[RMDB]
RNA sequence: GGGAACGACUCGAGUAGAGUCGAAAACAUACUGCUACCUCAGGUGGACAACAAGGCAUUAUGUUUACCAAAGAGAGCAAGCCUUCAAAAAAUAGAUCCUUGGUGCCUGAAACAAGCAGGCAUACUGGAGACACAUCUAAUGGCUGUGCUGAUGUCAUACGACUAUACGUUUCGACGUAUAGUCGUAAAAAGAAACAACAACAACAAC
Reactivity to DMS in 0.01 (KOAc 150mM, MgCl2 10mM, bicine 150mM(pH8.5), 24C), signal-to-noise 2, nucleotides 027 to 156: c040a080u000a020c100u000g000c040u000a130c030c010u000c040a300g020g020u000g020g030a280c080a070a160c060a010a130g050g090c030a030u010u000a030u020g010u000u010u000a130c010c090a100a160a100g010a080g000a070g040c040a090a100g010c030c030u000u010c030a000a030a130a050a090a170u010a130g000a070u000c010c020u000u020g020g030u000g000c000c000u000g000a090a100a080c170a080a110g000c010a020g020g020c000a030u000a030c090u010g020g030a020g000a090c060a070c090a100u000c040u000a070a180u020g010g000c050u000g030u000g020c020u010g000a110u010g000u000c010a160
Reactivity to 2A3 in 0.01 (KOAc 150mM, MgCl2 10mM, bicine 150mM(pH8.5), 24C), signal-to-noise 4, nucleotides 027 to 156: c010a000u040a010c000u010g000c020u060a070c010c020u090c080a170g080g080u080g070g090a060c040a110a060c030a180a120g050g050c020a010u050u080a030u050g010u020u030u010a000c010c010a010a080a020g160a010g010a000g030c020a010a000g020c000c010u130u180c190a090a140a040a020a010a050u110a030g050a030u040c010c000u020u080g060g010u020g030c010c000u000g020a110a220a070c080a150a000g070c000a000g030g000c000a010u070a210c020u020g030g000a050g050a030c040a000c010a070u060c040u100a080a080u110g010g020c030u030g050u050g210c000u040g000a100u120g090u030c020a030
Overview
Source: RMDB library OK3TST, as collected in RNAgym. Structure probing data (DMS and 2A3) for a 207-nucleotide construct. The DMS profile rests on 3,402 reads.